[RMDB]
RNA sequence: GGGAACGACUCGAGUAGAGUCGAAAAGAAAGAAACCUCGCUCCUGAACAGAAUUCGACCGCUAAGAUUCGGCAGUACAAGCGGUAGAAAAUAGUACAGCCGAAAUCAGGAGCGAGGAAAAGAAAAACAUCACUGGUAUAUUCGUAUACCAGUGAUGAAAAGAAACAACAACAACAAC
Reactivity to DMS in 0.01 (KOAc 150mM, MgCl2 10mM, bicine 150mM(pH8.5), 24C), signal-to-noise 4, nucleotides 027 to 126: g020a110a130a170g000a130a080a050c010c010u010c010g010c000u010c000c010u000g000a060a180c300a150g000a130a140u020u030c070g000a140c000c020g000c010u000a110a090g000a140u000u000c000g000g010c000a120g000u020a040c070a070a080g000c020g000g030u010a110g000a100a060a140a130u030a140g010u000a020c050a100g000c000c000g020a010a050a150u000c000a000g000g000a020g000c010g000a000g010g000a000a010a040a100g010a060a070a060a090a100
Reactivity to 2A3 in 0.01 (KOAc 150mM, MgCl2 10mM, bicine 150mM(pH8.5), 24C), signal-to-noise 3, nucleotides 027 to 126: g220a030a090a000g090a040a110a010c000c000u000c000g010c000u020c000c010u030g000a150a050c050a130g140a110a090u070u040c020g040a050c030c010g010c030u060a100a030g010a170u010u070c010g020g000c010a010g050u140a070c030a160a010g000c010g000g000u030a040g060a000a120a000a030u180a050g060u110a030c040a020g000c000c030g000a020a000a010u000c000a000g000g000a000g010c000g000a000g000g000a000a000a000a000g010a000a010a000a010a010